[RMDB]
RNA sequence: GGGAACGACUCGAGUAGAGUCGAAAAUAUUGUCUCUGGGACUACAAAAUUGGGAUUGGUGGUAAAUGAGGAUGAGACGCUGACAGCUAGUGAUUAUCUCAAUUAUGGGAAAGUUAUACUUUACAGACAUAUCAUGACGAUUCGUCGUCAUGAUAUGAAAAGAAACAACAACAACAAC
Reactivity to DMS in 0.01 (KOAc 150mM, MgCl2 10mM, bicine 150mM(pH8.5), 24C), signal-to-noise 9, nucleotides 027 to 126: u010a090u000u000g010u010c030u000c040u000g000g010g010a100c080u000a120c140a050a030a090a100u010u010g010g000g010a190u010u000g010g020u010g000g010u000a040a070a080u010g020a100g010g010a090u000g010a080g010a070c110g010c040u000g010a100c140a090g020c080u000a060g010u000g000a090u010u000a100u000c020u000c020a050a110u010u000a100u000g010g000g000a040a050a060g010u000u000a090u010a150c070u000u000u000a070c110a120g010a260
Reactivity to 2A3 in 0.01 (KOAc 150mM, MgCl2 10mM, bicine 150mM(pH8.5), 24C), signal-to-noise 6, nucleotides 027 to 126: u090a030u030u110g030u010c020u000c010u070g060g000g060a040c020u070a060c170a030a170a060a120u100u100g030g000g020a090u030u070g020g020u050g000g030u060a050a100a100u110g030a020g020g030a030u050g030a020g010a010c030g020c030u020g040a050c030a040g020c050u060a010g030u020g050a060u070u100a090u040c010u000c000a050a200u190u120a090u140g020g020g010a050a050a020g020u070u050a120u030a120c030u040u090u060a060c030a020g080a040